Chemical mapping of a 207-nucleotide RNA with DMS and 2A3.
DMS (dimethyl sulfate) methylates the pairing face of unpaired adenines and cytosines.
DMS adducts were read by reverse transcription with MarathonRT.
RNA sequence: GGGAACGACUCGAGUAGAGUCGAAAAGUGUGAAGUGAGUGAGCCACUUACGAGCACGAAUUACAUGGCUCUAUUGACAUUACUGGGCGCCAGGAGCCCUACCUGGACAAGUCUCGAAGAUCGGGCCGCGAUUGAGAGACGACUAUUAGCGGCCACACAUUAAAUAAUUAUUCGUAAUUAUUUAAUGAAAAGAAACAACAACAACAAC
Reactivity to DMS in 0.01 (KOAc 150mM, MgCl2 10mM, bicine 150mM(pH8.5), 24C), signal-to-noise 1, nucleotides 027 to 156: g020u010g020u020g010a110a170g020u000g010a070g010u000g010a130g020c090c050a070c010u000u000a040c090g000a300g000c010a050c040g010a120a120u000u010a100c130a130u000g000g000c010u000c010u000a100u000u000g010a130c080a100u000u000a120c050u000g010g010g030c050g020c040c010a060g010g000a130g030c020c050c010u040a000c070c040u000g020g000a100c060a070a100g000u000c000u000c030g000a130a280g000a100u000c010g030g000g010c040c040g010c000g010a030u000u010g010a300g000a060g000a040c010g010a080c060u010a150u000u010a110g010c040g010g000c000c000a130c060a160
Reactivity to 2A3 in 0.01 (KOAc 150mM, MgCl2 10mM, bicine 150mM(pH8.5), 24C), signal-to-noise 2, nucleotides 027 to 156: g000u000g000u020g070a030a020g020u000g030a040g000u060g020a040g070c100c050a010c000u020u010a000c020g010a000g030c000a000c050g010a030a040u190u100a090c060a070u100g000g000c000u000c030u040a140u060u230g050a050c030a110u000u190a140c070u120g000g040g030c060g030c010c020a010g000g020a070g030c020c000c010u060a020c010c000u000g000g020a010c020a080a060g000u010c010u010c020g050a090a030g000a040u040c070g000g000g040c010c000g020c000g000a010u040u100g020a010g000a010g000a020c030g020a000c000u040a060u220u080a030g030c000g000g010c000c000a000c000a000
High 2A3 reactivity points to a flexible backbone, as in loops and unpaired stretches.
Conditions: 150 mM KOAc, 10 mM MgCl2 and 150 mM bicine (pH 8.5), 24 C.